RNA sequence: GGGAACGACUCGAGUAGAGUCGAAAACAAUUCUUUCUUUGAUUGGGAUAUUUAACAGAUCAUUCCGAACUGGGUAGGUUUUUGCAGAAUUUCUGUUUUCUGAUUUAGACUACAUGUAUAUGUAUCAGUACUUGAUUUCAUUCGUGAAAUCAAGUACAAAAGAAACAACAACAACAAC
Reactivity to 2A3 in 0.01 (KOAc 150mM, MgCl2 10mM, bicine 150mM(pH8.5), 24C), signal-to-noise 2, nucleotides 027 to 126: c020a000a040u170u040c000u020u080u020c000u030u060u090g050a040u020u050g040g030g010a020u020a060u160u150u080a090a010c020a010g040a060u040c010a020u090u060c020c000g030a010a020c000u040g120g040g190u140a050g030g020u030u020u020u160u180g010c030a020g030a090a060u040u170u080c000u020g020u040u040u030u000c000u030g060a070u040u070u130a080g010a050c030u040a010c060a010u060g100u200a100u040a010u300g020u000a030u080c040a030
Reactivity to DMS in 0.01 (KOAc 150mM, MgCl2 10mM, bicine 150mM(pH8.5), 24C), signal-to-noise 2, nucleotides 027 to 126: c070a110a130u010u010c050u000u000u000c020u010u020u000g000a070u000u000g000g010g010a050u000a020u000u000u000a080a060c160a100g010a020u000c090a040u010u000c040c040g010a030a080c070u000g000g010g020u010a060g010g000u000u000u010u010u000g020c090a050g010a060a050u010u000u000c040u000g000u000u000u000u000c030u000g000a110u000u000u000a100g010a060c110u000a010c010a010u010g010u000a080u010a030u000g000u000a030u010c090a150
Description
An RNA of 177 nucleotides, treated with 2A3 and DMS and read out base by base. The 2A3 profile rests on 1,648 reads. The data come from the RNA Mapping Database (RMDB), library OK2TST. As a SHAPE reagent, 2A3 marks flexible, mostly unpaired nucleotides at the ribose 2'-OH.